[RMDB]
Structure probing data (2A3 and DMS) for a 177-nucleotide construct. For 2A3, 7,784 sequencing reads were counted. The RNA was probed in 150 mM KOAc, 10 mM MgCl2 and 150 mM bicine (pH 8.5) at 24 C. Values cover nucleotides 27 to 126. For 2A3 the reverse transcriptase was SuperScript II with manganese. For DMS the reverse transcriptase was MarathonRT.
RNA sequence: GGGAACGACUCGAGUAGAGUCGAAAAAAGAAGGUCAGCAUAGAUUGUACUUCCUUCCUCCUCCAGCACUUGCCUCUCUCCCCUGUUAACGGUGAACUGGCUGUCCAGAGGACUCAGGACUUUGCUGCUAAUCAAAGGUUUUCGAACCUUUGAUUAGAAAAGAAACAACAACAACAAC
Reactivity to 2A3 in 0.01 (KOAc 150mM, MgCl2 10mM, bicine 150mM(pH8.5), 24C), signal-to-noise 4, nucleotides 027 to 126: a000a000g050a030a010g010g020u090c030a010g000c040a120u130a160g150a300u070u090g030u070a080c020u030u020c000c000u010u010c000c000u000c000c000u010c000c000a020g030c020a040c050u040u120g010c010c000u010c010u010c010u020c020c010c000c010u000g030u120u050a050a020c030g000g010u030g030a080a030c010u020g060g000c020u020g010u000c000c010a040g030a030g100g030a020c010u020c050a010g010g040a050c000u030u040u060g020c010u030g000
Reactivity to DMS in 0.01 (KOAc 150mM, MgCl2 10mM, bicine 150mM(pH8.5), 24C), signal-to-noise 9, nucleotides 027 to 126: a040a030g000a060a040g000g010u000c040a040g020c050a170u010a120g010a120u010u000g010u010a190c040u000u000c010c020u000u000c020c010u000c020c010u000c020c020a060g010c070a040c080u000u000g010c030c010u000c040u000c060u000c020c010c010c040u000g010u010u010a060a080c100g020g010u000g010a070a110c090u000g010g010c070u000g010u000c050c020a080g010a100g010g010a050c060u000c070a040g010g010a070c070u000u000u000g010c050u000g000